[RMDB]
RNA sequence: GGGAACGACUCGAGUAGAGUCGAAAAAUCAUGACGAUGAAAGGACGAGAGCAAGCUGAGAGGCAAGCUGAGAGGCAAGCUCAAAGAAAGGAGCGUCCAACUCCUUACCCUCGUCUUUUAAAAAGAAGCAUUAAUAACCGUUCGCGGUUAUUAAUGCAAAAGAAACAACAACAACAAC
Reactivity to 2A3 in 0.01 (KOAc 150mM, MgCl2 10mM, bicine 150mM(pH8.5), 24C), signal-to-noise 2, nucleotides 027 to 126: a000u130c090a080u150g100a040c080g070a080u140g070a020a050a010g020g010a020c000g000a000g010a010g030c020a110a050g040c040u040g010a010g030a010g110g180c010a010a030g000c020u010g040a030g010a010g000g000c020a030a060g000c000u010c000a040a080a000g050a010a050a020g030g000a010g000c020g070u050c000c060a040a040c030u000c020c000u000u070a050c010c000c000u000c000g000u040c000u000u040u010u050a050a120a010a010a000g120a110a020
Reactivity to DMS in 0.01 (KOAc 150mM, MgCl2 10mM, bicine 150mM(pH8.5), 24C), signal-to-noise 2, nucleotides 027 to 126: a100u000c040a060u000g030a090c150g020a110u010g020a050a020a010g000g000a030c020g000a010g000a010g010c040a090a130g000c020u000g000a300g020a140g010g000c050a050a280g000c020u000g000a240g010a110g000g040c100a060a240g000c010u010c000a040a140a060g000a150a060a020g010g010a010g000c020g000u010c180c080a050a140c000u000c000c000u000u000a090c020c000c000u000c020g000u000c000u000u010u000u010a030a040a080a030a060g000a080a100